[RMDB]
RNA sequence: GGGAACGACUCGAGUAGAGUCGAAAAGCAGGCGGCUGGGAGGUGGAGGUUGUAGCGAGCCGAGAUCACGCCACUGCACUUCGGCCUGGGCAACAUUGAGCACUGAGUGAACGAGACUCCGUCUGCAAAGCAGGUCUUGGUUCGCCAAGACCUGCUUAAAAGAAACAACAACAACAAC
Reactivity to 2A3 in 0.01 (KOAc 150mM, MgCl2 10mM, bicine 150mM(pH8.5), 24C), signal-to-noise 1, nucleotides 027 to 126: g000c010a010g000g000c020g000g030c040u020g000g000g110a090g000g060u010g000g170a000g000g150u050u040g040u000a020g040c020g020a000g000c020c010g040a050g000a270u170c070a010c100g020c020c010a010c030u080g000c010a020c000u020u070c030g000g000c040c010u020g000g110g080c000a070a010c020a170u030u160g040a110g030c050a000c010u030g010a010g080u010g100a140a060c030g040a100g050a150c000u020c000c000g030u000c000u010g000c030a000
Reactivity to DMS in 0.01 (KOAc 150mM, MgCl2 10mM, bicine 150mM(pH8.5), 24C), signal-to-noise 1, nucleotides 027 to 126: g010c000a010g000g000c000g000g000c140u000g030g000g020a110g010g000u020g030g000a220g010g020u000u000g000u010a010g040c000g040a120g020c010c000g000a090g000a110u000c160a170c040g000c020c110a040c070u010g030c150a170c040u000u000c040g010g050c010c000u120g020g020g010c000a080a050c070a100u070u050g000a200g000c000a070c040u050g000a090g000u000g000a030a070c260g000a130g000a000c060u030c020c020g020u020c010u010g000c030a050